The record gives the reactivity of an RNA of 177 nucleotides to DMS. It was measured as part of the RMDB library OK2TRN.
[RMDB]
RNA sequence: GGGAACGACUCGAGUAGAGUCGAAAAAGCACGGCUGAUCGCCCGCUUGGAUUUAACCGACUGGUAUCAGGCUGCCCCCUUUAGUGAGAAGCCCUAUCAGCCUCAACAGGUGAUAUUACCAUUACGCAAUAUAUAGGGUCUUCGGACCCUAUAUAUUAAAAGAAACAACAACAACAAC
Reactivity to DMS in 0.01 (KOAc 150mM, MgCl2 10mM, bicine 150mM(pH8.5), 24C), signal-to-noise 5, nucleotides 027 to 126: a060g000c050a060c210g010g020c010u000g000a110u000c170g010c020c010c110g020c070u000u000g030g010a300u000u000u000a110a150c020c000g010a060c050u000g000g000u000a070u010c140a050g010g010c030u000g000c020c020c020c020c060u000u010u010a060g000u000g010a070g000a200a100g000c020c010c030u000a020u000c030a080g000c010c010u000c080a040a070c150a090g010g030u010g010a060u000a060u000u010a130c060c040a090u010u000a090c160g030c130